[RMDB]
RNA sequence: GGGAACGACUCGAGUAGAGUCGAAAAUCCGCAGCAUUCGUGCUGCGGAACUUACCGAGGAUGUUGCUCGGUAUAACAACAAAACCCUUGGAAACAAGGGAAACAAUGAGCUAUUCGUAGCUCAUAAAUAUAUAUGGAAAUUCGUUUCCAUAUAUAUAAAAGAAACAACAACAACAAC
Reactivity to DMS in 0.01 (KOAc 150mM, MgCl2 10mM, bicine 150mM(pH8.5), 24C), signal-to-noise 3, nucleotides 027 to 126: u000c010c000g030c000a010g010c000a030u000u020c180g020u000g010c000u000g030c000g000g000a000a020c090u000u000a010c000c000g010a010g000g010a070u000g010u010u010g010c000u000c010g000g000u000a000u000a070a120c130a080a080c120a080a070a070a080c000c000c010u010u000g000g010a150a120a190c010a020a000g000g000g010a030a030a050c120a050a030u000g000a010g000c010u000a030u000u020c160g030u000a010g010c000u000c000a000u000a010a060
Reactivity to 2A3 in 0.01 (KOAc 150mM, MgCl2 10mM, bicine 150mM(pH8.5), 24C), signal-to-noise 1, nucleotides 027 to 126: u020c000c010g000c010a000g000c020a010u070u100c220g090u050g000c000u000g020c000g000g000a000a000c010u020u030a000c000c000g000a000g070g040a150u270g080u300u250g060c000u000c000g000g000u000a010u060a020a000c020a000a010c010a010a040a080a130c010c010c030u000u000g030g000a010a030a020c010a000a000g020g000g000a000a020a000c000a000a050u010g000a000g040c000u010a030u040u090c100g100u040a010g000c000u020c000a000u020a000a020
An RNA of 177 nucleotides, treated with DMS and 2A3 and read out base by base. The 2A3 profile rests on 1,616 reads. It was measured as part of the RMDB library M2PK50. For DMS, 4,738 sequencing reads were counted. Conditions: 150 mM KOAc, 10 mM MgCl2 and 150 mM bicine (pH 8.5), 24 C.